RNA sequence: GGGAACGACUCGAGUAGAGUCGAAAAGACAAGACGCGUAGCUUCCUGUCCAUACUUGUCGACCAGGGCUUUGACCAGGUCUGCAGGGCUGUGCGGCGCACCAACAGGGCCUUUGCAGAACAUGGGCACGACCAGUGUUAUUCGUAACACUGGUCGUAAAAGAAACAACAACAACAAC
Reactivity to DMS in 0.01 (KOAc 150mM, MgCl2 10mM, bicine 150mM(pH8.5), 24C), signal-to-noise 3, nucleotides 027 to 126: g000a090c040a060a060g010a060c110g000c060g020u000a080g010c040u000u000c020c020u010g010u000c040c030a090u010a070c040u010u010g020u000c140g020a140c050c020a090g020g000g020c100u000u010u000g030a100c030c010a050g010g010u000c010u010g030c000a040g000g000g000c020u010g000u000g000c090g010g000c090g010c060a060c050c110a150a110c110a070g010g010g000c010c020u000u010u000g030c010a050g000a010a090c070a070u000g000g000g020c100
Reactivity to 2A3 in 0.01 (KOAc 150mM, MgCl2 10mM, bicine 150mM(pH8.5), 24C), signal-to-noise 3, nucleotides 027 to 126: g050a030c030a030a010g080a050c050g000c070g100u060a020g020c020u080u070c010c020u000g020u010c000c010a010u030a130c020u030u030g020u050c030g000a040c040c010a100g050g070g000c060u100u110u220g070a100c010c000a020g060g000u000c010u000g010c010a020g000g020g000c030u060g030u020g100c040g040g010c040g000c030a130c040c010a070a080c040a100g050g050g000c000c000u190u260u120g000c000a000g000a070a030c020a090u030g000g050g000c030